[RMDB]
RNA sequence: GGGAACGACUCGAGUAGAGUCGAAAAAUGAUGGCUGGGCCAAGAAGUCAGAGAUUAGGGUAAUUGGAUAACAAGUUUAAGAGCAUGACAUCACUACCAUCAUUAGUGAGUUAUCUAACAAGUGAGGCCUAUGGUGAUGUUUCGACAUCACCAUAGGAAAAGAAACAACAACAACAAC
Reactivity to 2A3 in 0.01 (KOAc 150mM, MgCl2 10mM, bicine 150mM(pH8.5), 24C), signal-to-noise 3, nucleotides 027 to 126: a000u060g030a010u020g000g000c020u040g020g030g040c030c010a040a030g090a070a010g100u040c050a000g000a010g010a160u040u140a070g040g040g010u030a090a080u060u060g040g010a020u010a100a030c030a080a050g030u030u070u130a150a040g030a020g060c080a060u110g010a000c000a050u020c010a020c010u030a030c020c010a080u080c010a000u030u020a010g000u010g020a030g010u030u010a030u030c050u020a010a040c020a110a030g090u080g120a010g000g080
Reactivity to DMS in 0.01 (KOAc 150mM, MgCl2 10mM, bicine 150mM(pH8.5), 24C), signal-to-noise 6, nucleotides 027 to 126: a050u010g010a050u000g010g000c070u000g010g000g000c060c060a060a060g020a110a100g000u000c060a060g000a140g020a100u010u000a070g010g010g010u010a070a110u010u000g000g000a060u010a020a060c070a070a090g010u000u000u010a060a140g010a100g020c110a060u010g010a060c050a260u000c020a030c020u000a060c120c060a030u010c080a040u000u000a030g010u010g010a080g010u000u000a030u010c030u010a050a060c140a060a100g010u000g000a100g000g000
This 177-nucleotide RNA was probed chemically with 2A3 and DMS. For 2A3, 3,910 sequencing reads were counted. The data come from the RNA Mapping Database (RMDB), library OK2TRN. The RNA was probed in 150 mM KOAc, 10 mM MgCl2 and 150 mM bicine (pH 8.5) at 24 C.